[RMDB]
RNA sequence: GGGAACGACUCGAGUAGAGUCGAAAACGGAGUGAGUGCAACGGUGCGUACGUGGACGGCGAUUCCAGUGGUGAACAGCACGAACCGCGCAUCACGCGGAAGGUCUUGCAAGGAGGAAAAGCGGCAGUGGGAAUCACGCAGCGCGCACGUGGUGUGCGAUCGCAGCAUCUUUCGAGAUGCUGCGAUCAAAAGAAACAACAACAACAAC
Reactivity to 2A3 in 0.01 (KOAc 150mM, MgCl2 10mM, bicine 150mM(pH8.5), 24C), signal-to-noise 2, nucleotides 027 to 156: c030g020g050a040g000u060g030a040g010u040g010c050a080a110c100g060g010u020g010c010g000u060a010c080g020u070g000g040a020c000g010g040c090g060a040u050u060c020c030a000g010u020g120g030u060g030a070a040c040a040g080c040a000c070g020a040a030c030c010g000c020g040c020a140u080c060a050c080g000c000g000g000a040a060g030g040u000c010u010u020g000c050a060a060g020g000a000g000g000a010a000a130a060g020c000g040g040c020a010g040u140g110g000g080a090a020u040c000a000c020g020c060a050g040c030g000c000g000c030a010c050g040u100g000g080u070g020u040g030c060
Annotation:
Source: RMDB library OK3TST, as collected in RNAgym. The record gives the reactivity of an RNA of 207 nucleotides to 2A3. The RNA was probed in 150 mM KOAc, 10 mM MgCl2 and 150 mM bicine (pH 8.5) at 24 C. For 2A3 the reverse transcriptase was SuperScript II with manganese. Values cover nucleotides 27 to 156.